[RMDB]
RNA sequence: GGGAACGACUCGAGUAGAGUCGAAAAGAAGACGUGACGAAAAGUCACGAAAAUAAAGUGCGAAAUAAAUCACGAAAGUGAACUGCAAAGCACAAGCAGAAAAGGUAACGGAGACGUUACCAAAAGAGCACUGAGUAGGUUUCGACCUACUCAGUGCAAAAGAAACAACAACAACAAC
Reactivity to DMS in 0.01 (KOAc 150mM, MgCl2 10mM, bicine 150mM(pH8.5), 24C), signal-to-noise 1, nucleotides 027 to 126: g000a150a220g000a160c010g010u000g000a010c000g000a100a000a100a300g000u030c000a000c000g020a020a150a070a030u030a070a070a120g000u040g000c000g000a130a230a120u010a010a030a180u000c000a000c000g040a150a120a130g000u000g040a000a110c070u000g010c000a020a000a150g000c000a090c100a100a180g000c010a010g000a120a050a020a040g000g080u030a070a000c000g060g020a180g000a110c000g000u000u000a000c030c000a000a000a000a000g010a130
Reactivity to 2A3 in 0.01 (KOAc 150mM, MgCl2 10mM, bicine 150mM(pH8.5), 24C), signal-to-noise 2, nucleotides 027 to 126: g160a070a010g030a000c030g000u040g000a000c110g090a160a160a000a000g000u000c000a000c000g020a000a000a000a000u100a000a040a030g010u000g000c050g180a110a000a240u300a040a210a020u080c050a040c050g050a040a010a020g010u000g000a000a130c020u000g000c030a000a100a000g030c000a000c000a050a070g000c000a000g100a120a240a010a010g000g000u000a000a000c000g010g010a010g010a030c000g000u000u000a000c000c000a000a000a000a000g000a000